Structure probing data (2A3) for a 207-nucleotide construct.

RNA sequence: GGGAACGACUCGAGUAGAGUCGAAAAGAUGCUCGCGGUCGGGAGCUUCGAUAACGUCAUCCCGGACCCGGAUUUCACUAACGAAGAGCUGCAGUGGGGAUCCGCGGUCUCGCCGUACUCGUUCCCCGCGACCGAGGGACGGACCGGCGGCGGGGCGGGCCCCAUGCUAAUUCGUUAGCAUGGGGCCAAAAGAAACAACAACAACAAC
Reactivity to 2A3 in 0.01 (KOAc 150mM, MgCl2 10mM, bicine 150mM(pH8.5), 24C), signal-to-noise 1, nucleotides 027 to 156: g050a000u040g000c000u010c000g300c010g010g140u060c020g030g100g000a020g010c000u070u120c140g040a110u100a240a060c080g050u000c020a060u110c000c000c060g010g030a030c000c000c000g000g030a020u010u110u130c020a010c010u050a160a000c020g050a030a080g050a070g270c090u100g010c170a030g020u030g020g050g020g040a050u020c030c020g080c200g140g040u020c030u000c010g000c000c000g050u080a160c000u040c020g010u060u170c000c020c000c000g050c110g050a050c110c060g000a070g000g000g020a000c030g000g080a100c020c090g000g020c020g010g020c020g010g010g050g000c010g010
It was measured as part of the RMDB library OK3TST. For 2A3 the reverse transcriptase was SuperScript II with manganese.